[RMDB]
RNA sequence: GGGAACGACUCGAGUAGAGUCGAAAAGAAUAUAAGAGCGUGUUCGCGUCUUGACGUGAAUGAGCCUAGACUGUAGGUUCUAGUGGGAUAGAAACGCUCACUCACAAAACGCUAUUCCACACGAAGACACUGCAUCGAUGUUCGCAUCGAUGCAGUGAAAAGAAACAACAACAACAAC
Reactivity to 2A3 in 0.01 (KOAc 150mM, MgCl2 10mM, bicine 150mM(pH8.5), 24C), signal-to-noise 3, nucleotides 027 to 126: g020a020a020u150a010u150a190a060g000a000g000c000g000u030g080u090u090c000g000c000g010u000c060u170u220g080a030c020g000u060g010a020a000u050g000a000g020c000c000u050a100g060a300c100u160g150u190a000g000g000u000u030c010u000a010g000u000g000g030g040a000u000a000g000a060a080a000c030g000c000u010c010a030c000u090c000a070c010a010a100a080a040c110g040c020u000a000u000u000c000c000a010c000a000c160g110a030a010g030a020
Reactivity to DMS in 0.01 (KOAc 150mM, MgCl2 10mM, bicine 150mM(pH8.5), 24C), signal-to-noise 2, nucleotides 027 to 126: g000a080a110u050a060u050a120a070g030a000g030c010g010u000g060u000u010c070g040c000g060u000c100u020u020g080a030c020g020u000g020a040a000u000g020a030g010c030c020u000a000g010a240c140u000g020u000a010g110g000u000u010c040u020a080g000u000g000g040g000a000u010a000g010a070a030a030c020g000c000u000c000a030c030u030c060a130c290a030a010a060a050c130g000c000u000a030u000u000c000c080a020c060a120c250g000a030a050g050a300